[RMDB]
Chemical mapping of a 177-nucleotide RNA with 2A3 and DMS. For 2A3, 3,391 sequencing reads were counted. The RNA was probed in 150 mM KOAc, 10 mM MgCl2 and 150 mM bicine (pH 8.5) at 24 C. For DMS the reverse transcriptase was MarathonRT.
RNA sequence: GGGAACGACUCGAGUAGAGUCGAAAAGGGGAACUCGGUGUCGGCAUCUGUUAAUUCCUUUUGGAAUUUAGAGCCAUUGAAGGUGAAAGCCCUGUUCGCGGGUGUCGACAUCUAGACCAUGCCCUUAUUCGACUAGUACAUUCGUGUACUAGUCGAAAAAAGAAACAACAACAACAAC
Reactivity to 2A3 in 0.01 (KOAc 150mM, MgCl2 10mM, bicine 150mM(pH8.5), 24C), signal-to-noise 4, nucleotides 027 to 126: g010g020g010g010a060a080c000u000c020g000g020u000g000u010c000g000g000c010a000u000c000u000g030u040u060a030a020u030u050c000c000u100u220u170u300g010g000a010a010u000u020u050a090g010a020g030c020c050a130u110u160g090a080a040g020g000u030g020a050a010a020g050c010c010c010u030g020u020u060c030g000c010g010g010g010u000g000u000c010g000a000c000a000u000c000u000a010g020a060c000c020a040u090g030c000c000c000u020u050a160
Reactivity to DMS in 0.01 (KOAc 150mM, MgCl2 10mM, bicine 150mM(pH8.5), 24C), signal-to-noise 2, nucleotides 027 to 126: g000g000g000g010a080a070c030u010c050g020g030u010g040u000c000g030g000c000a000u020c000u000g010u030u020a050a030u030u000c000c000u000u010u050u000g000g000a020a010u000u010u010a010g020a050g040c040c300a120u030u060g040a040a100g000g010u000g000a130a140a080g000c060c000c030u000g010u000u000c100g000c050g000g000g010u000g010u010c020g020a000c000a010u000c000u000a000g010a100c010c050a040u020g010c000c000c000u000u020a070
2A3 adducts were read by reverse transcription with SuperScript II with manganese.